[RMDB]
RNA sequence: GGGAACGACUCGAGUAGAGUCGAAAACACGAGGACCAUAGAGCAUAGUCUUGGGAUCUCGUAUUGUCAAGAGAAACUGACCAAUGCAGCUUCGUCUUGCUGUGCAACGAUAUUAGGGCAUGUAGCAACAGACUAUGUAGUUCGCUACAUAGUCUGUAAAAGAAACAACAACAACAAC
Reactivity to 2A3 in 0.01 (KOAc 150mM, MgCl2 10mM, bicine 150mM(pH8.5), 24C), signal-to-noise 8, nucleotides 027 to 126: c070a010c000g010a010g020g000a010c020c020a070u220a110g050a010g060c130a190u150a150g080u030c000u020u020g000g030g070a180u000c000u000c000g000u000a080u020u180g090u070c040a030a010g040a000g040a010a030a000c010u010g020a030c000c020a020a010u100g000c000a010g000c000u010u000c000g060u000c010u010u040g000c010u020g010u030g020c030a080a060c050g060a060u020a070u200u150a080g000g000g000c030a010u070g050u040a040g020c030a020
Reactivity to DMS in 0.01 (KOAc 150mM, MgCl2 10mM, bicine 150mM(pH8.5), 24C), signal-to-noise 7, nucleotides 027 to 126: c080a050c050g020a020g000g000a080c010c020a040u070a020g010a060g010c170a150u050a100g010u010c000u000u010g000g010g000a110u010c000u000c090g010u010a050u010u010g010u030c010a030a050g010a130g010a020a020a060c030u010g000a050c050c190a110a060u040g010c000a030g000c050u000u000c030g000u020c010u000u010g000c030u010g000u010g000c050a040a080c120g010a120u030a080u010u020a070g010g000g000c020a030u010g010u000a050g010c100a100